[RMDB]
RNA sequence: GGGAACGACUCGAGUAGAGUCGAAAAGAUAUGGAACUAGAGCAACAGCCCUACCAGUCGGAAACGACUGAGGGACAUGCUCAUUCCUAAGUCAAAAGUAGAGAAAGUCUUCGGACUUUCUCUACAACUACAGGAUACAGUUCGCUGUAUCCUGUAGAAAAGAAACAACAACAACAAC
Reactivity to 2A3 in 0.01 (KOAc 150mM, MgCl2 10mM, bicine 150mM(pH8.5), 24C), signal-to-noise 3, nucleotides 027 to 126: g030a020u080a040u130g000g020a020a060c150u130a300g000a050g000c010a010a170c070a190g060c010c000c020u070a250c100c060a000g000u010c000g010g020a050a040a030c000g000a000c010u020g000a020g020g030g020a040c020a080u050g000c010u000c000a010u000u000c000c000u010a140a020g020u000c020a040a020a110a170g010u000a000g000a000g020a010a010a010g010u000c030u120u240c300g030g000a000c000u000u000u010c000u010c000u000a000c000a010a000
Reactivity to DMS in 0.01 (KOAc 150mM, MgCl2 10mM, bicine 150mM(pH8.5), 24C), signal-to-noise 4, nucleotides 027 to 126: g000a030u000a300u010g020g000a000a030c280u000a140g010a020g010c010a030a060c230a150g010c000c010c010u000a170c300c000a020g020u000c010g010g000a060a110a180c020g010a010c000u000g010a050g000g000g000a020c070a130u000g000c020u000c010a210u000u010c000c000u000a080a140g000u010c030a080a060a100a120g000u000a000g010a020g000a010a000a010g010u000c000u000u000c170g030g000a020c000u000u000u000c000u000c000u010a000c000a020a080